[RMDB]
RNA sequence: GGGAACGACUCGAGUAGAGUCGAAAAACGCACCGCGUUCCGCGGCGCGCAGCACCGAUUUCAAGUGGUUCAGGAAGUCCAGGAGCAAUCGGAUAGGGUUGCGGUGCUGAAGUACCAGUCCAGGAUACAUGGUGAUCAAGCACGGUAUGCUGUCGCCGUUUAAACGGCAGUUCGCUGCCGUUUAAACAAAAGAAACAACAACAACAAC
Reactivity to DMS in 0.01 (KOAc 150mM, MgCl2 10mM, bicine 150mM(pH8.5), 24C), signal-to-noise 2, nucleotides 027 to 156: a030c010g050c020a010c010c020g010c010g000u000u000c120c140g020c050g020g030c010g070c010g020c000a090g080c020a180c030c010g020a080u000u010u000c050a070a140g050u010g010g000u000u000c040a160g020g010a090a090g010u000c030c050a120g060g010a300g020c020a060a040u000c030g000g010a100u000a230g010g010g020u000u010g020c000g040g070u000g020c010u030g000a090a160g000u000a030c040c010a090g040u000c070c000a170g000g000a140u010a060c080a150u000g020g000u000g010a070u000c120a100a080g020c030a020c070g000g010u000a300u000g040c010u000g040u000c030g000c030c050
Reactivity to 2A3 in 0.01 (KOAc 150mM, MgCl2 10mM, bicine 150mM(pH8.5), 24C), signal-to-noise 3, nucleotides 027 to 156: a000c080g000c040a030c040c030g010c030g110u220u130c130c070g020c050g010g000c030g020c020g000c010a000g010c000a040c000c000g020a030u000u100u050c040a060a020g040u030g020g050u110u120c060a090g120g080a140a020g080u010c050c020a050g050g000a030g040c060a030a060u030c010g060g040a090u120a070g140g010g000u030u080g040c050g010g000u000g000c020u030g020a050a010g030u020a030c030c030a010g040u040c060c020a030g020g040a040u030a110c100a120u120g030g000u040g010a070u070c090a020a020g040c030a020c080g080g060u190a080u080g010c000u000g030u030c030g010c010c010